An RNA of 207 nucleotides, treated with 2A3 and read out base by base. The 2A3 profile rests on 979 reads. For 2A3 the reverse transcriptase was SuperScript II with manganese.
[RMDB]
RNA sequence: GGGAACGACUCGAGUAGAGUCGAAAACAAGUUCGUGCUUGCGACUUACACGUAGGGCGAGGGGUGGGCGAAAGUUGCCAUGAGACCGUAACUUUAGUAGUCAUUGAUAAAGGGGCAGGUCUCGCUCAAAACCUCCCGUGGUUCGCCACGGGAGGAACACUACGCACACGUUCGCGUGUGCGUAGUGAAAAGAAACAACAACAACAAC
Reactivity to 2A3 in 0.01 (KOAc 150mM, MgCl2 10mM, bicine 150mM(pH8.5), 24C), signal-to-noise 2, nucleotides 027 to 156: c050a000a020g010u110u070c030g040u080g160c030u040u070g060c050g130a060c050u110u120a050c170a000c050g030u020a080g040g030g010c130g030a190g010g000g010g010u300g000g020g010c060g040a080a060a050g020u030u050g060c090c030a100u090g010a000g000a000c010c030g000u050a000a030c000u010u030u020a000g030u010a050g020u080c050a110u050u240g100a020u040a090a030a020g020g010g040g020c090a020g000g010u020c000u010c030g000c040u110c070a040a120a070a150c000c000u000c020c000c000g010u010g010g010u040u030c140g070c090c000a010c000g010g000g000a000g000g000a000a000